Background:
The record gives the reactivity of an RNA of 177 nucleotides to 2A3 and DMS. Conditions: 150 mM KOAc, 10 mM MgCl2 and 150 mM bicine (pH 8.5), 24 C. It was measured as part of the RMDB library OK2TST.
RNA sequence: GGGAACGACUCGAGUAGAGUCGAAAACGAAGGCGCGGUAGACAAGGCGGCUAAUGAAGAGAUGCUGAACAAAUUGGCAUCGGAGCUUUAGGAGCUUAAAGAGCAGCGCGGUAGCGCCAGGCAUCAACUCUAAGUACCCGUUCGCGGGUACUUAGAGAAAAGAAACAACAACAACAAC
Reactivity to 2A3 in 0.01 (KOAc 150mM, MgCl2 10mM, bicine 150mM(pH8.5), 24C), signal-to-noise 1, nucleotides 027 to 126: c030g030a040a070g010g000c050g000c020g050g060u120a020g060a120c060a000a040g090g010c030g000g000c020u050a110a040u170g060a060a060g050a020g000a090u020g000c010u070g000a080a020c080a120a300a240u050u080g020g010c020a000u030c020g020g000a000g000c000u060u070u120a180g120g090a030g000c000u040u050a100a030a000g040a010g000c000a010g110c070g000c000g050g000u100a050g020c010g000c010c000a020g040g000c010a070u090c080a050a070
Reactivity to DMS in 0.01 (KOAc 150mM, MgCl2 10mM, bicine 150mM(pH8.5), 24C), signal-to-noise 2, nucleotides 027 to 126: c120g020a070a170g000g010c040g020c020g020g020u000a080g020a070c120a150a100g000g050c030g010g010c000u010a030a030u010g000a060a090g020a260g020a020u010g010c010u000g000a050a170c190a050a100a250u000u000g000g020c000a010u000c000g010g000a110g020c020u000u010u020a090g020g000a040g000c000u010u000a070a140a070g020a060g010c000a090g000c020g000c030g000g000u020a110g020c010g000c000c020a110g000g010c090a060u000c180a070a120